RNA sequence: GGGAACGACUCGAGUAGAGUCGAAAAGCAUUUGGAAAGUCUGAAAGAACCUGAACCUUUACACUCUCCAGAUUCAGAGCGGUCUUCUAAACUGCAGCCUGUGACAGAAGUGAAACCUCAGAUGCAAGACAGGCGUAGGAUUCGUCCUACGCCUGUCAAAAGAAACAACAACAACAAC
Reactivity to DMS in 0.01 (KOAc 150mM, MgCl2 10mM, bicine 150mM(pH8.5), 24C), signal-to-noise 1, nucleotides 027 to 126: g000c010a000u000u000u020g000g000a070a020a240g020u050c100u030g050a050a080a050g000a090a050c110c030u000g000a050a060c230c000u000u000u040a080c060a050c020u000c030u000c050c020a090g000a090u020u000c030a010g010a210g000c160g090g050u000c030u000u000c110u000a070a030a030c050u000g050c000a100g030c190c000u000g040u000g000a040c120a050g000a130a110g010u000g000a050a100a130c000c060u000c050a010g000a060u010g000c040a060a000
Reactivity to 2A3 in 0.01 (KOAc 150mM, MgCl2 10mM, bicine 150mM(pH8.5), 24C), signal-to-noise 3, nucleotides 027 to 126: g020c000a030u030u010u000g040g050a110a070a050g000u010c080u030g040a110a050a000g080a100a110c010c030u010g050a070a080c020c000u070u140u190a100c040a010c010u050c010u010c020c030a040g010a170u060u030c030a030g000a000g030c010g010g050u010c020u240u010c050u220a110a130a230c010u040g000c010a020g020c020c010u120g020u100g040a080c100a120g040a130a000g020u000g060a040a010a000c000c010u000c000a000g020a050u070g020c040a070a050

Structure probing data (DMS and 2A3) for a 177-nucleotide construct.
Source: RMDB library OK1LIB, as collected in RNAgym.